[RMDB]
RNA sequence: GGGAACGACUCGAGUAGAGUCGAAAAGGGUUUGAGCCAUCGCCCGAAUAGGAUGGCUGAUACAAGUCGCCAUUGUACGCGACGUAGUACGUACUCAUUAGUGCGAAAGCACGGUUAGUCCGACUCGGCAGGGACGAUCUUCUGUCAAUACUUAGAACAGUAUCCCGUCAUUCGUGACGGGAUACUGAAAAGAAACAACAACAACAAC
Reactivity to 2A3 in 0.01 (KOAc 150mM, MgCl2 10mM, bicine 150mM(pH8.5), 24C), signal-to-noise 1, nucleotides 027 to 156: g000g000g000u060u100u180g070a000g000c000c000a050u040c000g000c000c000c040g000a030a180u160a090g060g000a000u000g000g000c030u080g000a010u070a110c010a120a070g000u000c000g000c000c000a080u170u300g080u250a120c000g000c000g000a000c040g010u000a000g000u000a010c000g010u000a000c000u000c070a010u000u050a060g010u000g010c000g050a090a070a000g000c000a000c000g000g060u000u020a010g000u000c040c000g070a090c040u000c040g000g000c040a000g060g000g000a030c050g040a100u050c050u190u040c000u050g090u030c010a050a050u070a230c060u110u140a150g120a110a000
The record gives the reactivity of an RNA of 207 nucleotides to 2A3.
Conditions: 150 mM KOAc, 10 mM MgCl2 and 150 mM bicine (pH 8.5), 24 C.